[RMDB]
RNA sequence: GGGAACGACUCGAGUAGAGUCGAAAACGGUUACGCCUUCUUUACCGUUAUCAAGGAAGGUACUCGGCCAUGCGAAGGGAAGCAUUAUUCCUUAGGCGCAUGUCGCCGCCAGCAUGGUGUGAGGGGAAAAAGUAUGCUGGGUUCGCCCAGCAUACAAGUUUGUUUGAGGGUUCGCCCUCAAACAAACAAAAGAAACAACAACAACAAC
Reactivity to 2A3 in 0.01 (KOAc 150mM, MgCl2 10mM, bicine 150mM(pH8.5), 24C), signal-to-noise 1, nucleotides 027 to 156: c000g000g000u010u030a020c050g030c000c000u000u000c010u010u030u050a020c030c000g260u130u070a060u100c050a000a010g030g000a000a010g000g000u020a030c010u000c010g000g040c000c010a000u000g000c000g040a060a020g000g000g010a040a000g060c080a090u120u120a120u250u030c000c040u030u040a080g040g000c040g000c060a160u280g100u230c040g010c030c000g000c020c000a020g010c000a000u030g040g040u050g160u250g050a020g000g020g000g040a060a130a040a040a000g000u000a000u000g030c030u000g000g020g000u010u000c040g070c030c000c020a000g010c010a000u000a000c000a010a000

About this RNA
Source: RMDB library M2RFPK, as collected in RNAgym. This 207-nucleotide RNA was probed chemically with 2A3. 2A3 adducts were read by reverse transcription with SuperScript II with manganese.